[RMDB]
RNA sequence: GGGAACGACUCGAGUAGAGUCGAAAAACGUACCUAUUCGUAGGUACGUGAUUAAAAGCUAGUCAUAUAAAAGGAUGACUAGCAAUAUAGAAUCCUAUAUUAAUAGCACAUGUUUCGACAUGUGCAAUGUUGAUAUAGACUUCGGUCUAUAUCAACAAAAAGAAACAACAACAACAAC
Reactivity to DMS in 0.01 (KOAc 150mM, MgCl2 10mM, bicine 150mM(pH8.5), 24C), signal-to-noise 5, nucleotides 027 to 126: a020c000g010u000a010c000c000u000a010u000u010c210g020u000a000g000g010u000a000c000g000u000g000a060u010u000a060a080a120a100g010c000u000a000g000u000c000a020u000a080u000a100a090a180a110g000g010a010u000g010a010c000u000a000g010c000a020a020u000a070u010a080g000a120a110u010c020c000u000a030u010a080u010u010a120a110u010a150g010c000a000c000a000u000g000u000u000u010c170g010a030c000a010u000g010u000g020c000a030a020
Reactivity to 2A3 in 0.01 (KOAc 150mM, MgCl2 10mM, bicine 150mM(pH8.5), 24C), signal-to-noise 6, nucleotides 027 to 126: a010c000g010u000a000c000c010u010a030u020u090c230g070u020a000g000g010u000a000c000g010u000g000a000u010u130a030a080a010a000g000c000u000a000g000u000c010a010u090a010u050a110a290a110a040g300g050a010u020g000a000c000u000a000g000c000a000a000u030a010u000a010g120a050a050u030c000c010u050a060u020a040u300u190a170a240u140a130g000c000a000c000a000u000g020u020u100u080c200g090a020c000a000u010g000u010g010c000a000a000
Source: RMDB library M2PK50, as collected in RNAgym. The record gives the reactivity of an RNA of 177 nucleotides to DMS and 2A3. The RNA was probed in 150 mM KOAc, 10 mM MgCl2 and 150 mM bicine (pH 8.5) at 24 C. Values are in units of 0.01, from 0 to 300, in steps of 10.